[RMDB]
RNA sequence: GGGAACGACUCGAGUAGAGUCGAAAAGGGGUCGACUUGGAUUUAAGCACGACUAGCAGAGGUACACUGAAGCCUCCACGGUGUACUACCCACCUGCUAGAUAACGUGCUUUGUCAGUCGACGGAGGCACCCAAACGGAUUUGUUCGCAAAUCCGAAGAAUCACCAGAGGUUCGCCUCUGGUGAUUCAAAAGAAACAACAACAACAAC
Reactivity to 2A3 in 0.01 (KOAc 150mM, MgCl2 10mM, bicine 150mM(pH8.5), 24C), signal-to-noise 2, nucleotides 027 to 156: g080g000g040g000u030c020g000a000c010u130u190g170g070a070u270u270u300a070a000g010c020a000c020g040a040c000u000a000g000c010a000g000a010g010g020u010a000c000a000c000u060g020a160a030g030c010c000u010c000c000a030c010g020g000u000g000u000a020c020u020a030c070c080c000a060c030c000u010g000c010u000a010g010a020u130a100a050c000g000u000g000c000u070u010u040g000u010c020a020g000u010c000g000a000c000g000g000a000g000g000c000a020c000c030c000a000a150a010c030g000g000a000u000u030u030g050u080u150c190g010c160a000a000a000u030c000c000g000a050a030

An RNA of 207 nucleotides, treated with 2A3 and read out base by base. The data come from the RNA Mapping Database (RMDB), library RNAMAK. The reactions ran in a buffer of 150 mM KOAc, 10 mM MgCl2 and 150 mM bicine (pH 8.5), at 24 C.